[RMDB]
RNA sequence: GGGAACGACUCGAGUAGAGUCGAAAACUUUUGCACACCGCGCAUUACCACACACAGGUGGGAUGCUUCAACAACAACUGCCACACCCUGGGGUUGUAACAGUCCUUGCAGAGCGUUACCAAUUUGCCAAGCAUUUAAUGUUCGCAUUAAAUGCUUGAAAAGAAACAACAACAACAAC
Reactivity to 2A3 in 0.01 (KOAc 150mM, MgCl2 10mM, bicine 150mM(pH8.5), 24C), signal-to-noise 5, nucleotides 027 to 126: c010u050u060u150u140g030c040a030c010a030c050c040g020c020g000c050a010u020u100a300c020c000a030c010a010c000a010c030a060g110g110u010g000g020g000a010u020g010c000u080u150c070a070a070c000a010a000c010a000a030c030u150g120c030c000a040c010a020c040c030c000u020g010g000g030g010u020u020g020u030a040a030c020a030g050u010c020c010u030u060g000c020a010g020a020g040c020g040u040u030a040c020c000a060a160u110u050u070g070c040
Reactivity to DMS in 0.01 (KOAc 150mM, MgCl2 10mM, bicine 150mM(pH8.5), 24C), signal-to-noise 8, nucleotides 027 to 126: c070u000u000u010u010g020c030a080c070a070c070c080g020c270g010c020a040u000u000a100c030c010a030c020a100c160a130c270a120g010g020u000g000g000g010a040u000g010c020u000u000c110a070a070c120a050a050c060a040a060c050u000g010c020c030a070c110a090c070c040c050u000g000g010g010g000u000u000g010u000a040a070c090a070g000u000c020c030u000u000g010c060a090g000a070g000c040g010u000u000a080c030c020a090a130u010u000u010g010c230